[RMDB]
Source: RMDB library TTRDES, as collected in RNAgym.
Chemical mapping of a 177-nucleotide RNA with DMS.
DMS adducts were read by reverse transcription with MarathonRT.
The DMS profile rests on 957 reads.

RNA sequence: GGGAACGACUCGAGUAGAGUCGAAAAGAUAUGGAAACCGAUGAACGAUAAGCUCCCAUCGGAAACGAUGGAGAGCUUUUGACGUUCUAGGUUUCCUAAGUCAAAACUAUAGGCUUCGGCCUAUAGACCACUAAAACUCGUUCGCGAGUUUUAGUGGAAAAGAAACAACAACAACAAC
Reactivity to DMS in 0.01 (KOAc 150mM, MgCl2 10mM, bicine 150mM(pH8.5), 24C), signal-to-noise 1, nucleotides 027 to 126: g000a030u000a210u000g010g000a020a000a020c000c010g040a180u020g000a000a020c000g010a150u020a040a020g000c000u020c000c000c000a010u000c010g020g000a000a020a090c010g000a000u000g010g000a180g020a000g000c010u000u010u000u000g020a220c080g000u000u000c010u000a300g000g000u000u000u000c000c000u000a020a070g000u000c000a110a100a090a250c000u000a000u010a000g030g010c000u000u010c300g040g020c000c010u010a010u010a010g020a300